[RMDB]
RNA sequence: GGGAACGACUCGAGUAGAGUCGAAAAGGUUAGGGUACAGAGAUGGGCAGGAUAUAAAUAGAUGUCGCCAACGUUUCUGGAUCUCCAAGACCUGUAUCAGAAUCACCUGAGGCACCUGUUCAGCUUGCAGAUUCUUGCCAAUACUUUGCCCCACCCCCUAUGCUUGAAUCUUCGGAUUCAAGCAUAGAAAAGAAACAACAACAACAAC
Reactivity to DMS in 0.01 (KOAc 150mM, MgCl2 10mM, bicine 150mM(pH8.5), 24C), signal-to-noise 1, nucleotides 027 to 156: g040g020u000u010a050g030g150g110u000a100c040a060g010a070g010a050u010g020g010g000c010a070g060g030a050u000a130u010a010a090a090u000a060g020a040u000g000u000c020g070c090c080a050a140c100g000u000u000u000c030u010g030g000a130u000c020u010c050c030a050a160g000a040c030c020u010g030u000a080u020c060a080g030a100a070u000c050a030c070c070u000g010a090g000g040c010a110c020c000u000g070u010u000c020a090g000c090u000u010g040c060a110g010a140u000u000c000u000u000g020c000c030a050a070u010a030c050u000u000u000g000c020c030c030c020a100c010c000c010c060
Reactivity to 2A3 in 0.01 (KOAc 150mM, MgCl2 10mM, bicine 150mM(pH8.5), 24C), signal-to-noise 2, nucleotides 027 to 156: g040g000u100u080a020g030g030g010u120a090c050a030g000a010g030a090u130g050g000g000c070a040g010g070a010u040a000u030a100a170a020u150a050g150a120u080g020u060c040g020c030c000a060a050c070g000u020u030u000c030u050g090g040a070u020c070u020c080c010a080a070g070a140c060c050u010g010u110a040u100c010a010g030a060a010u040c010a010c110c030u070g080a050g010g060c040a030c070c000u020g070u000u070c030a070g020c060u050u070g020c010a020g010a200u050u020c000u090u090g030c000c000a010a010u080a130c040u080u060u080g010c010c000c000c000a050c040c000c000c020